[RMDB]
RNA sequence: GGGAACGACUCGAGUAGAGUCGAAAAGAGAACAUGGGCCUGAUCACGCUGGCGCUCGGUGCGGCAACACUUUUCGCGGAUACCGGAGCCUACGGGCCGGCGUCGAUCGCCGCCGCCGCAGCGAUGCCAGGGGGACAGGGUUCGCCCUGUCCCCCUGAAAAGAAACAACAACAACAAC
Reactivity to 2A3 in 0.01 (KOAc 150mM, MgCl2 10mM, bicine 150mM(pH8.5), 24C), signal-to-noise 4, nucleotides 027 to 126: g070a010g020a020a050c050a120u110g010g030g010c000c040u050g040a100u100c020a010c110g080c040u020g050g000c050g020c080u060c040g050g020u040g010c000g010g050c020a140a000c030a060c100u070u110u160u210c070g030c030g060g010a050u110a180c010c020g090g040a040g040c030c010u060a060c090g030g060g000c020c000g030g000c000g060u170c080g020a030u070c040g000c000c000g000c000c010g000c000c030g000c020a040g060c010g030a040u060g040c000
Reactivity to DMS in 0.01 (KOAc 150mM, MgCl2 10mM, bicine 150mM(pH8.5), 24C), signal-to-noise 2, nucleotides 027 to 126: g020a030g000a070a050c080a000u020g000g000g020c070c030u010g050a020u000c150a070c050g020c020u000g000g000c000g000c120u010c130g000g040u000g020c000g000g000c030a080a150c190a090c080u000u020u030u030c080g010c030g010g000a060u000a140c070c000g000g050a170g030c000c000u060a090c100g020g020g010c020c010g000g040c000g000u020c150g020a150u020c060g000c020c060g090c040c090g020c020c030g030c090a030g010c030g000a070u010g080c050